Structure probing data (2A3 and DMS) for a 207-nucleotide construct. The data come from the RNA Mapping Database (RMDB), library OK3TST. The DMS profile rests on 2,437 reads. Conditions: 150 mM KOAc, 10 mM MgCl2 and 150 mM bicine (pH 8.5), 24 C. Reactivities are given for positions 27 through 156.
[RMDB]
RNA sequence: GGGAACGACUCGAGUAGAGUCGAAAAUGAACUCUUUGAUUUUGUAUCACAUGCGCCGGCAGUCACAUCUGUUUGAGAAUUAAGAUUAUUGUUGCCUCCUUUGACGGCUGCAUCUCCACCGAUCUGCGCUAGUAGAUUUUUAAGCUGUGGUGUAAUCAUUGGGGGUUAUAUUCGUAUAACCCCCAAUAAAAGAAACAACAACAACAAC
Reactivity to 2A3 in 0.01 (KOAc 150mM, MgCl2 10mM, bicine 150mM(pH8.5), 24C), signal-to-noise 1, nucleotides 027 to 156: u120g010a050a100c070u040c100u150u070u120g050a110u040u080u070u210g110u100a030u150c030a000c000a030u120g000c030g030c020c010g180g000c010a000g020u050c080a030c030a150u000c010u050g110u040u050u140g100a070g020a140a200u110u100a200a000g070a150u020u080a120u120u000g120u060u070g030c000c000u040c010c030u050u040u040g070a050c030g000g000c010u030g010c010a040u020c020u010c070c000a040c000c000g000a000u000c000u000g000c040g010c010u030a050g000u010a000g000a050u000u160u040u050u270a150a110g030c040u000g000u000g000g020u000g020u100a000a000u040c140
Reactivity to DMS in 0.01 (KOAc 150mM, MgCl2 10mM, bicine 150mM(pH8.5), 24C), signal-to-noise 1, nucleotides 027 to 156: u020g020a060a110c040u000c050u000u010u000g020a070u000u000u000u020g000u000a090u000c040a100c030a040u000g030c080g010c040c040g040g030c040a040g010u010c080a120c030a070u000c060u000g030u000u000u000g030a100g010a090a100u000u000a090a120g020a130u000u000a070u000u000g010u000u000g030c010c030u020c040c040u000u010u050g020a080c120g020g010c010u000g030c010a010u000c020u020c020c000a000c050c050g010a030u000c000u000g010c080g020c160u000a110g070u000a040g010a070u000u000u000u000u010a050a170g020c050u000g050u010g030g030u010g000u000a060a100u010c040